[RMDB]
RNA sequence: GGGAACGACUCGAGUAGAGUCGAAAAGAAUUUUAGAAAAGCAAGGCCGCCGAAGCAGCACCCGAAAUGCUGAGGGCUAAUUUGGGGUUUAGGAGCAACCUUUCCUGGAAAAAGUGGAAAGGAAAGAGGUAAUGCCACUAUUCGUAGUGGCAUUACCAAAAGAAACAACAACAACAAC
Reactivity to DMS in 0.01 (KOAc 150mM, MgCl2 10mM, bicine 150mM(pH8.5), 24C), signal-to-noise 1, nucleotides 027 to 126: g000a120a130u010u050u020u000a110g000a240a150a140a300g000c050a050a130g030g000c030c020g000c020c030g000a050a180g000c070a010g030c090a030c030c000c020g060a080a000a050u000g000c000u000g050a100g000g000g030c040u030a020a090u010u010u000g000g000g030g030u000u000u000a100g010g010a030g020c100a040a100c030c000u010u000u000c000c000u000g000g010a170a080a030a070a060g080u040g000g000a030a010a000g000g070a010a060a040g000a180
Reactivity to 2A3 in 0.01 (KOAc 150mM, MgCl2 10mM, bicine 150mM(pH8.5), 24C), signal-to-noise 1, nucleotides 027 to 126: g040a010a110u140u150u230u190a130g000a080a140a080a000g010c000a000a020g000g000c000c000g010c030c000g070a070a000g000c080a020g000c020a100c010c000c020g050a020a020a020u200g010c060u000g040a070g050g030g000c000u000a010a000u020u080u090g140g000g000g000u050u000u120a160g000g000a060g060c000a000a020c000c000u020u020u020c000c000u060g030g000a160a000a000a000a000g190u050g010g000a000a000a000g000g070a020a020a020g110a100